[RMDB]
RNA sequence: GGGAACGACUCGAGUAGAGUCGAAAAGAUAUGGAUCAAGUGCAUCGCGAUAAGAAGCCAUCGGAAACGAUGGGCUUCUUUUGACGCGAUGCUUGAUCCUAAGUCAAAACAAGCCUUCGGGCUUGAACAAUCUAAGAGCGUUCGCGCUCUUAGAUUGAAAAGAAACAACAACAACAAC
Reactivity to 2A3 in 0.01 (KOAc 150mM, MgCl2 10mM, bicine 150mM(pH8.5), 24C), signal-to-noise 3, nucleotides 027 to 126: g010a010u060a020u110g010g010a000u000c000a020a030g130u120g270c020a020u010c010g010c020g090a050u030a300a010g020a000a010g030c000c000a000u000c000g020g010a090a050a020c010g010a010u050g020g000g070c010u010u000c010u010u010u010u050g050a040c080g000c000g000a000u000g010c000u000u000g000a000u000c010c000u000a060a000g000u020c020a000a050a120a260c010a010a010g010c010c000u110u190c300g140g000g010c010u010u010g000a020a000
Reactivity to DMS in 0.01 (KOAc 150mM, MgCl2 10mM, bicine 150mM(pH8.5), 24C), signal-to-noise 4, nucleotides 027 to 126: g010a020u000a300u000g000g000a020u000c000a020a030g020u010g020c040a020u010c010g010c000g010a210u000a020a000g010a010a010g010c000c000a030u000c000g000g000a170a090a170c010g010a010u000g000g040g000c000u000u000c000u000u000u000u010g020a200c110g010c000g020a010u000g010c010u000u000g010a020u000c000c000u000a020a070g010u010c030a120a110a160a230c010a010a030g010c000c000u000u010c240g030g010g030c000u000u000g000a100a250
Structure probing data (2A3 and DMS) for a 177-nucleotide construct. Source: RMDB library TTRDES, as collected in RNAgym. Conditions: 150 mM KOAc, 10 mM MgCl2 and 150 mM bicine (pH 8.5), 24 C. Values are in units of 0.01, from 0 to 300, in steps of 10.